[RMDB]
RNA sequence: GGGAACGACUCGAGUAGAGUCGAAAAUCGAUGCAGUCCUCAGCAACGUUAAGUGCCAGUGCCUGGGCUUCGGCGGUGAAACGUUUUGAAGGCCCAAAAUCGAGUGGAAAUAGUGCACCCACCGACGUAAUUAAAUCGGAUUCGUCCGAUUUAAUUAAAAAGAAACAACAACAACAAC
Reactivity to DMS in 0.01 (KOAc 150mM, MgCl2 10mM, bicine 150mM(pH8.5), 24C), signal-to-noise 9, nucleotides 027 to 126: u010c060g010a090u010g010c050a070g010u000c020c020u000c080a080g010c060a060a080c070g010u010u010a090a100g010u000g010c020c050a070g010u000g010c040c050u010g010g010g010c010u000u000c030g000g000c020g000g010u000g010a110a120a130c020g010u000u000u000u010g020a060a050g020g010c000c010c010a030a030a060a090u000c040g010a110g020u010g000g000a050a040a070u000a070g000u000g000c050a160c100c010c000a030c030c020g000a090c230g010
Reactivity to 2A3 in 0.01 (KOAc 150mM, MgCl2 10mM, bicine 150mM(pH8.5), 24C), signal-to-noise 5, nucleotides 027 to 126: u070c010g010a010u060g020c020a000g060u030c000c020u040c020a020g020c020a020a050c040g040u080u120a120a060g040u040g080c010c010a040g030u020g060c000c030u030g010g020g010c000u020u010c010g010g000c000g000g000u030g030a060a040a030c010g000u000u000u050u160g050a040a030g070g050c010c000c030a050a030a000a030u080c040g010a040g020u020g010g060a030a060a040u110a070g050u060g020c020a030c000c000c000a010c010c010g020a030c040g050

Structure probing data (DMS and 2A3) for a 177-nucleotide construct. Reactivities are given for positions 27 through 126. For DMS, 17,917 sequencing reads were counted. For 2A3, 10,256 sequencing reads were counted. It was measured as part of the RMDB library OK2TST.